[RMDB]
This 207-nucleotide RNA was probed chemically with 2A3. 2A3 adducts were read by reverse transcription with SuperScript II with manganese.
RNA sequence: GGGAACGACUCGAGUAGAGUCGAAAAAUGCUGAGAUCCUACUUUUUGCCGGACUUAGUACUGAUUGCUCUCUCCUGAGCAUCCUUCUUAAGUCAAAGAGAAUAUUCAUUGUUAGGGAAGGAAAAAAAGAUAGAGGGAAAAAAAAUAGAUGGCAAGACUACCAUGCUCCAUUCGUGGAGCAUGGUAGAAAAGAAACAACAACAACAAC
Reactivity to 2A3 in 0.01 (KOAc 150mM, MgCl2 10mM, bicine 150mM(pH8.5), 24C), signal-to-noise 1, nucleotides 027 to 156: a000u040g010c010u010g040a040g020a300u000c010c000u100a130c020u110u130u010u120u130g020c000c000g010g010a030c010u030u000a000g030u100a020c110u090g040a120u060u250g020c000u000c000u000c010u000c000c020u070g040a010g060c000a010u020c000c000u060u090c030u080u070a060a040g020u100c050a090a070a000g070a000g030a240a040u030a100u230u110c020a020u010u080g070u120u140a060g030g020g050a010a000g000g000a030a090a100a000a000a060a090g030a000u130a090g020a040g020g000g020a060a060a000a000a000a000a050a090u210a040g070a080u120g000g010c000a000a020g040a050
The reactions ran in a buffer of 150 mM KOAc, 10 mM MgCl2 and 150 mM bicine (pH 8.5), at 24 C.